[RMDB]
RNA sequence: GGGAACGACUCGAGUAGAGUCGAAAAGAGCGUCGAGAGACGAAGAGAAGUGCACCGAUCAGCAAAGGCGAACGUAAUGGUGCACAAGAGUAAGUCAGUGAAACGUUCUCGGGGCACUGGAGGCAGAAUAGUCAUAUGGAUUCGUCCAUAUGACUAUAAAAGAAACAACAACAACAAC
Reactivity to 2A3 in 0.01 (KOAc 150mM, MgCl2 10mM, bicine 150mM(pH8.5), 24C), signal-to-noise 9, nucleotides 027 to 126: g050a010g010c040g200u020c020g010a020g000a000g000a070c050g040a110a030g070a010g040a270a030g010u010g000c000a000c000c020g050a110u140c040a030g050c050a080a190a140g240g000c030g040a050a030c030g040u110a070a070u230g010g000u010g010c000a000c000a010a010g040a010g060u150a150a020g030u070c070a020g020u030g160a060a030a040c030g020u040u000c010u010c020g000g000g010g000c020a010c040u050g020g020a050g060g010c040a010g050a140
Reactivity to DMS in 0.01 (KOAc 150mM, MgCl2 10mM, bicine 150mM(pH8.5), 24C), signal-to-noise 9, nucleotides 027 to 126: g000a060g010c010g010u000c030g000a190g000a120g000a010c010g020a090a100g000a120g020a120a110g010u000g010c000a010c000c010g000a130u030c130a180g010c100a100a110a110g000g010c030g000a070a080c150g020u020a090a090u040g000g020u000g000c010a000c000a010a070g000a090g000u010a080a140g000u010c030a050g010u010g000a080a080a070c060g000u000u010c020u000c030g010g000g000g010c040a050c030u010g000g010a080g000g010c090a080g000a120
Description: This 177-nucleotide RNA was probed chemically with 2A3 and DMS. It was measured as part of the RMDB library OK1LIB. The 2A3 profile rests on 30,134 reads. The RNA was probed in 150 mM KOAc, 10 mM MgCl2 and 150 mM bicine (pH 8.5) at 24 C. The DMS profile rests on 61,174 reads. Values cover nucleotides 27 to 126. For 2A3 the reverse transcriptase was SuperScript II with manganese.